This 177-nucleotide RNA was probed chemically with DMS and 2A3.
For 2A3 the reverse transcriptase was SuperScript II with manganese.
The 2A3 profile rests on 38,192 reads.
DMS adducts were read by reverse transcription with MarathonRT.
Conditions: 150 mM KOAc, 10 mM MgCl2 and 150 mM bicine (pH 8.5), 24 C.
[RMDB]
RNA sequence: GGGAACGACUCGAGUAGAGUCGAAAAGAGUUGACAGGCAGCUUCGUCGACCUGUCAGUCGCUGCCACUCCUAUUAGCGCAAAGGCUAGCGACAGCAGCGGCUCCGGGCCGGGCGAGCGGCUAUGAGCCGCGUUGCAUCCUUCGGGAUGUAACGCGGAAAAGAAACAACAACAACAAC
Reactivity to DMS in 0.01 (KOAc 150mM, MgCl2 10mM, bicine 150mM(pH8.5), 24C), signal-to-noise 9, nucleotides 027 to 126: g010a130g000u020u000g000a070c030a050g010g000c050a070g010c030u020u020c050g020u010c020g010a100c020c000u010g000u000c090a030g030u000c000g010c010u000g000c010c030a160c260u010c030c040u020a090u050u010a040g030c030g030c160a130a140a130g010g020c010u000a010g000c240g010a030c300a170g000c020a020g000c000g000g000c000u010c150c020g000g020g010c020c000g030g010g000c030g010a040g010c010g000g000c010u000a060u030g000a190g010
Reactivity to 2A3 in 0.01 (KOAc 150mM, MgCl2 10mM, bicine 150mM(pH8.5), 24C), signal-to-noise 9, nucleotides 027 to 126: g080a010g030u060u080g040a040c030a030g030g020c010a010g010c030u170u140c050g030u010c010g010a050c000c000u010g020u020c020a000g000u000c000g000c000u000g000c010c030a070c060u040c010c010u100a160u270u120a070g020c050g050c210a200a120a050g230g000c010u020a010g010c030g070a010c010a010g000c000a000g000c000g000g000c000u000c010c010g010g010g000c010c000g100g000g020c010g010a010g000c010g010g000c010u060a140u180g040a020g020